[RMDB]
Notes
Structure probing data (2A3 and DMS) for a 207-nucleotide construct. The reactions ran in a buffer of 150 mM KOAc, 10 mM MgCl2 and 150 mM bicine (pH 8.5), at 24 C. 2A3 adducts were read by reverse transcription with SuperScript II with manganese.
RNA sequence: GGGAACGACUCGAGUAGAGUCGAAAACGUCAAUUCGUUGACGCCUUAUCCUAAGUCGUCGCGAAACAGAGCAUCUUCACAACAGCUGUAUCGGAAACGAUACAGACAUGUGAAGUUGCUCUGGAGACGAUAUGGACCUUCCGGCGUUCGCGCCGAAGCAUGCUUGAGGAUUCGUCCUCAAGCAUGCAAAAGAAACAACAACAACAAC
Reactivity to 2A3 in 0.01 (KOAc 150mM, MgCl2 10mM, bicine 150mM(pH8.5), 24C), signal-to-noise 6, nucleotides 027 to 156: c020g000u010c010a050a100u080u100c180g070u110u190g000a010c010g060c000c010u120u160a200u100c020c050u070a090a070g020u000c010g000u000c010g020c060g160a150a040a070c000a000g000a000g020c000a000u000c000u000u000c000a000c000a090a090c020a110g030c010u010g000u000a000u000c000g040g040a090a050a070c010g000a010u000a000c020a000g010a030c020a050u040g000u000g000a000a000g010u000u000g000c000u000c000u000g000g000a010g000a000c000g000a010u020a070u150g040g020a040c010c020u150u100c120c040g000g020c010g040u070u070c240g010c000g000c060c020g030a040a020
Reactivity to DMS in 0.01 (KOAc 150mM, MgCl2 10mM, bicine 150mM(pH8.5), 24C), signal-to-noise 1, nucleotides 027 to 156: c050g030u000c000a040a050u000u000c220g030u020u000g010a060c010g000c020c050u000u000a110u000c040c020u010a120a150g020u000c000g010u000c000g000c060g020a190a110a300c010a010g010a000g000c000a010u000c010u010u000c000a000c030a050a070c080a150g060c010u000g010u000a000u000c010g010g010a230a110a220c000g020a040u000a040c000a050g020a020c020a190u010g040u010g000a020a010g000u000u000g010c020u000c040u010g000g000a180g000a040c010g020a020u030a140u000g010g010a110c020c000u000u000c060c030g010g020c000g040u000u000c190g010c040g030c000c000g000a020a140